[RMDB]
RNA sequence: GGGAACGACUCGAGUAGAGUCGAAAAUGUAGGGCGGGUCGGCGCGUCGUUGCCGGGUAGGGGUCGCGGUCUUUCGAUGAUGGGCGGUUCCACGCUGCCGAAAAGGAAGACCUCGGCGUGUCUGCCCCACCCUGCUCCUUUUCGAAGGAGCAGGGUGAAAAGAAACAACAACAACAAC
Reactivity to 2A3 in 0.01 (KOAc 150mM, MgCl2 10mM, bicine 150mM(pH8.5), 24C), signal-to-noise 3, nucleotides 027 to 126: u290g030u130a070g040g030g070c110g030g010g050u050c010g020g040c000g000c040g030u060c040g070u050u100g110c000c000g020g050g040u020a040g040g010g010g000u000c010g010c010g040g000u000c020u000u000u030c010g150a220u170g030a100u140g130g030g000c000g000g020u160u140c050c010a060c110g020c010u010g020c000c000g060a100a090a040a000g010g000a000a000g000a010c010c000u010c020g000g000c060g030u080g090u030c020u000g020c000c000c000
Reactivity to DMS in 0.01 (KOAc 150mM, MgCl2 10mM, bicine 150mM(pH8.5), 24C), signal-to-noise 1, nucleotides 027 to 126: u130g000u040a060g040g030g000c150g000g000g010u000c070g020g040c070g030c100g000u000c040g030u010u010g020c010c000g000g010g000u000a030g000g040g010g060u000c000g070c250g040g000u010c000u000u030u000c000g000a060u000g000a200u000g000g000g000c000g000g060u000u000c170c240a110c280g050c050u010g050c010c000g010a080a110a140a230g000g000a000a000g000a010c000c030u000c020g000g000c010g000u040g000u030c040u000g000c000c010c000
The record gives the reactivity of an RNA of 177 nucleotides to 2A3 and DMS. Values cover nucleotides 27 to 126. The 2A3 profile rests on 1,580 reads. DMS adducts were read by reverse transcription with MarathonRT. The reactions ran in a buffer of 150 mM KOAc, 10 mM MgCl2 and 150 mM bicine (pH 8.5), at 24 C. For 2A3 the reverse transcriptase was SuperScript II with manganese. It was measured as part of the RMDB library OK1LIB.